[RMDB]
The record gives the reactivity of an RNA of 177 nucleotides to 2A3 and DMS. Reactivities are given for positions 27 through 126. For 2A3 the reverse transcriptase was SuperScript II with manganese. The DMS profile rests on 9,537 reads. Source: RMDB library TTRINS, as collected in RNAgym.
RNA sequence: GGGAACGACUCGAGUAGAGUCGAAAAGAUAUGGACAUAGACCCGCUCACUGCGUAGGAUAGUUGCGAUGAAAGGACAAUCGGAAACGAUUGUCCUGGAGCAACCUGUGAGCGCUAUGUCCUAAGUCCUCUUAUAUGCUGUUCGCAGCAUAUAAGAGAAAAGAAACAACAACAACAAC
Reactivity to 2A3 in 0.01 (KOAc 150mM, MgCl2 10mM, bicine 150mM(pH8.5), 24C), signal-to-noise 7, nucleotides 027 to 126: g020a010u070a020u110g000g000a010c010a000u010a030g070a150c080c150c080g000c000u000c000a020c010u080g090c190g300u300a210g180g300a150u170a280g040u020u020g030c070g250a300u030g000a040a010a000g000g000a000c010a000a010u000c000g000g010a030a010a020c000g000a010u000u010g000u020c000c000u010g000g000a010g000c010a000a000c000c000u000g000u000g010a000g000c000g000c000u000a000u000g000u000c000c000u000a010a000g000u020c010
Reactivity to DMS in 0.01 (KOAc 150mM, MgCl2 10mM, bicine 150mM(pH8.5), 24C), signal-to-noise 6, nucleotides 027 to 126: g000a060u000a090u010g000g000a020c000a020u000a020g000a300c180c300c300g000c010u010c010a000c000u000g000c180g020u020a160g020g010a180u010a150g010u000u000g000c000g000a090u020g000a100a150a030g000g000a020c000a000a000u000c000g010g000a040a030a110c000g020a010u000u010g000u000c000c000u000g000g010a020g000c000a000a000c010c020u000g000u000g000a010g010c010g000c020u000a010u000g000u000c000c000u000a000a070g010u000c010